[RMDB]
RNA sequence: GGGAACGACUCGAGUAGAGUCGAAAAGAUAUGGACGCGUGUUGUCAGCUGGUGGUCGGAAACGACCAUUCAGCUUGGAUUUACACCGCGUCCUAAGUCAAAGCUGUUUGACUUCGGUCAAACAGCACUCUCAUCGCUACUUCGGUAGCGAUGAGAGAAAAGAAACAACAACAACAAC
Reactivity to DMS in 0.01 (KOAc 150mM, MgCl2 10mM, bicine 150mM(pH8.5), 24C), signal-to-noise 1, nucleotides 027 to 126: g000a060u000a300u020g000g000a000c010g060c010g020u010g020u020u000g000u010c040a070g000c010u000g000g010u000g000g000u000c000g010g010a070a090a210c010g000a010c000c000a000u000u030c000a020g010c020u010u000g080g000a010u000u000u010a030c010a000c070c090g010c000g000u010c010c000u010a010a030g010u010c030a090a100a140g010c010u000g010u020u000u000g000a030c000u000u010c250g070g010u000c000a000a010a010c000a000g010c000a010
Reactivity to 2A3 in 0.01 (KOAc 150mM, MgCl2 10mM, bicine 150mM(pH8.5), 24C), signal-to-noise 2, nucleotides 027 to 126: g080a020u000a020u210g000g000a010c000g020c050g000u070g030u140u080g050u060c090a030g030c030u000g020g000u010g000g000u010c020g010g030a050a070a080c020g000a000c000c000a000u300u160c000a010g000c000u000u070g040g070a040u260u140u160a020c010a000c000c090g020c000g000u020c020c000u010a040a000g030u030c060a040a030a200g000c040u020g030u040u000u000g000a000c000u120u110c300g120g000u030c020a020a000a000c000a000g000c010a000